RNA sequence: GGGAACGACUCGAGUAGAGUCGAAAAAAGGGCCACAUGGUCCUGCCAGAGCUCGGCCAGGACCUGGCACUGUUGAGGGCGGAGCCGAGGGAGGGAGUCCUGCAGCCGGGGGUGGAGGAGGCCAUCCUCCUUUAUACUCAUUCGUGAGUAUAAAGGAAAAAGAAACAACAACAACAAC
Reactivity to 2A3 in 0.01 (KOAc 150mM, MgCl2 10mM, bicine 150mM(pH8.5), 24C), signal-to-noise 7, nucleotides 027 to 126: a000a000g050g010g000c050c000a090c040a190u150g010g000u000c000c000u000g000c010c000a090g030a090g200c090u100c200g030g020c120c030a010g000g000a010c000c000u000g010g010c020a030c080u040g110u130u100g040a120g020g020g030c130g020g030a060g080c070c070g030a130g010g020g010a150g010g010g010a030g040u030c020c020u040g030c040a040g100c050c040g020g000g000g030g030u070g000g030a080g050g030a040g030g020c020c000a020u030c000c010
Reactivity to DMS in 0.01 (KOAc 150mM, MgCl2 10mM, bicine 150mM(pH8.5), 24C), signal-to-noise 9, nucleotides 027 to 126: a080a030g010g000g010c010c010a130c300a130u010g010g010u000c000c000u000g000c020c010a130g000a180g020c180u000c110g000g010c130c060a030g010g010a020c000c010u000g000g000c010a050c040u000g010u000u000g000a190g000g000g010c140g000g000a150g020c070c050g010a160g000g000g000a140g000g000g000a120g010u000c010c020u000g000c090a070g010c080c070g010g010g000g000g020u000g000g000a070g000g000a110g000g010c100c100a060u000c070c050